[RMDB]
RNA sequence: GGGAACGACUCGAGUAGAGUCGAAAAGAUAUGGACCCAGCUUUUGACGACACCAUAUCGGAAACGAUAUCCCUGUCGAUAAGCUGGUCCUAAGUCAAAUCCGAAGUUUCUUCGGAAACUUCGGAAAGACGAUGGUAGUGUUCGCACUACCAUCGUCAAAAGAAACAACAACAACAAC
Reactivity to 2A3 in 0.01 (KOAc 150mM, MgCl2 10mM, bicine 150mM(pH8.5), 24C), signal-to-noise 1, nucleotides 027 to 126: g040a000u050a020u120g000g020a000c090c170c040a020g000c040u180u190u070u200g260a160c060g000a000c020a030c080c110a020u020a000u000c000g000g020a080a050a000c020g000a000u000a000u000c000c010c050u030g000u030c030g070a100u000a080a010g000c010u000g020g000u000c010c000u000a100a000g030u050c030a040a030a130u030c000c000g000a010a020g010u030u000u000c040u040u180c260g100g000a000a000a000c000u010u010c000g040g000a020a000a020
Reactivity to DMS in 0.01 (KOAc 150mM, MgCl2 10mM, bicine 150mM(pH8.5), 24C), signal-to-noise 1, nucleotides 027 to 126: g020a080u030a300u020g000g000a010c130c090c060a010g020c000u000u000u020u000g000a170c080g000a030c030a030c060c160a010u010a000u000c000g010g000a050a060a160c010g010a010u000a000u000c050c040c020u000g060u000c010g000a070u000a000a020g000c010u000g010g000u000c000c010u000a020a120g000u020c030a110a160a120u000c000c010g000a010a000g000u000u000u000c000u000u010c220g010g000a000a000a000c000u000u000c010g020g000a000a010a070
About this RNA:
This 177-nucleotide RNA was probed chemically with 2A3 and DMS. For 2A3, 2,279 sequencing reads were counted. For 2A3 the reverse transcriptase was SuperScript II with manganese.